An RNA of 177 nucleotides, treated with 2A3 and DMS and read out base by base.
The data come from the RNA Mapping Database (RMDB), library OK1LIB.
For 2A3 the reverse transcriptase was SuperScript II with manganese.
RNA sequence: GGGAACGACUCGAGUAGAGUCGAAAAAAUCUGCCGCGGGUGAAUGCCCACGGUGGACCCGGGGGCCGACCGGGCUGCUGGCAGACGAUCACCCGGGAGCUGUGGCCGGCACCCUAUCUGGUGAUGGACACCCGUAUCAAUUCGUUGAUACGGGUGUAAAAGAAACAACAACAACAAC
Reactivity to 2A3 in 0.01 (KOAc 150mM, MgCl2 10mM, bicine 150mM(pH8.5), 24C), signal-to-noise 3, nucleotides 027 to 126: a000a000u010c010u000g000c010c000g030c020g000g000g010u160g180a280a080u300g030c010c000c010a020c000g000g000u030g010g000a010c000c000c000g010g000g000g030g000c000c000g010a030c000c020g010g040g000c000u090g080c000u020g050g000c020a050g080a300c070g060a120u100c070a090c050c020c000g000g010g000a050g000c050u090g050u300g270g000c030c010g020g020c030a280c010c000c000u030a080u080c140u150g080g000u040g040a060u050g040g000
Reactivity to DMS in 0.01 (KOAc 150mM, MgCl2 10mM, bicine 150mM(pH8.5), 24C), signal-to-noise 3, nucleotides 027 to 126: a070a150u010c000u000g010c000c000g020c060g010g020g000u000g020a200a060u060g000c010c000c000a050c000g000g010u000g000g010a050c010c000c010g030g000g000g010g010c010c010g000a050c020c010g000g020g010c040u000g020c000u000g000g010c160a130g010a170c190g020a100u020c090a120c300c000c000g000g010g000a030g000c000u000g000u020g020g000c030c030g000g010c000a030c000c000c010u000a000u030c120u020g000g020u010g010a110u000g020g000